RNA sequence: GGGAACGACUCGAGUAGAGUCGAAAAGAUAUGGACACUGCUACCCACCUCGGUGGAUGGGAACUACAGCCAAGCCUCGGAAACGAGGCGACGCUGCCCAUCCACCGAGAGGCAGUGUCCUAAGUCAUCUAGACAUAUACUUCGGUAUAUGUCUAGAAAAAGAAACAACAACAACAAC
Reactivity to DMS in 0.01 (KOAc 150mM, MgCl2 10mM, bicine 150mM(pH8.5), 24C), signal-to-noise 4, nucleotides 027 to 126: g020a160u010a110u000g020g010a010c010a010c000u010g010c010u020a130c040c000c030a300c080c010u010c000g010g030u000g000g000a030u000g000g010g000a230a040c070u010a300c020a010g000c000c050a060a300g000c000c000u000c010g010g020a090a120a240c000g010a000g040g000c020g000a080c300g000c000u010g000c000c000c000a000u010c000c000a010c000c000g020a000g000a010g000g000c000a010g000u000g000u000c000c010u000a000a060g000u020c140a100
Reactivity to 2A3 in 0.01 (KOAc 150mM, MgCl2 10mM, bicine 150mM(pH8.5), 24C), signal-to-noise 2, nucleotides 027 to 126: g130a110u300a210u300g000g000a000c000a000c020u020g030c030u280a300c080c060c000a020c000c000u010c010g050g000u000g010g000a010u020g000g000g020a140a090c220u300a050c300a000g000c020c020a070a020g000c000c000u000c020g000g000a100a120a110c020g020a000g000g000c040g010a000c010g000c000u010g020c000c000c010a000u020c000c000a000c010c000g000a000g000a000g010g000c000a000g000u000g010u000c000c000u010a000a000g050u050c020a100